[RMDB]
Conditions: 150 mM KOAc, 10 mM MgCl2 and 150 mM bicine (pH 8.5), 24 C. Chemical mapping of a 177-nucleotide RNA with DMS and 2A3. Source: RMDB library RFM100, as collected in RNAgym.
RNA sequence: GGGAACGACUCGAGUAGAGUCGAAAAUAUACUACAAAAAAUGAAAUUUCUUUGUUUAUUUCAAUUUCUAGUGGGUCGUAUUCACAUGCAACUCAAGACUAGAGUAUCUACAACAUGGUCGACUUGGACCGUGGUAUCUUUUCGAAGAUACCACGGUAAAAGAAACAACAACAACAAC
Reactivity to DMS in 0.01 (KOAc 150mM, MgCl2 10mM, bicine 150mM(pH8.5), 24C), signal-to-noise 2, nucleotides 027 to 126: u000a010u010a050c050u000a070c080a000a000a050a030a040a100u050g010a060a030a170u000u000u050c050u000u000u000g010u010u000u000a030u010u020u000c010a000a070u040u000u000c030u010a010g000u030g000g030g000u000c050g000u010a100u000u000c100a130c170a080u010g000c010a000a000c020u000c030a050a200g020a300c040u000a060g020a040g040u050a030u000c090u000a050c180a080a120c080a050u040g000g000u010c040g000a090c040u010u050g000g000
Reactivity to 2A3 in 0.01 (KOAc 150mM, MgCl2 10mM, bicine 150mM(pH8.5), 24C), signal-to-noise 4, nucleotides 027 to 126: u070a010u070a040c030u060a030c110a030a050a040a030a010a030u140g060a050a090a070u120u090u030c100u050u120u040g050u050u130u060a050u010u030u020c010a010a020u070u110u040c020u010a010g080u060g000g030g000u010c010g000u030a130u030u140c090a040c040a130u100g090c030a080a050c000u010c050a100a010g050a140c010u030a040g000a020g080u050a070u030c070u100a020c010a120a010c030a110u050g040g010u030c020g020a110c010u020u000g080g030

The DMS profile rests on 1,752 reads.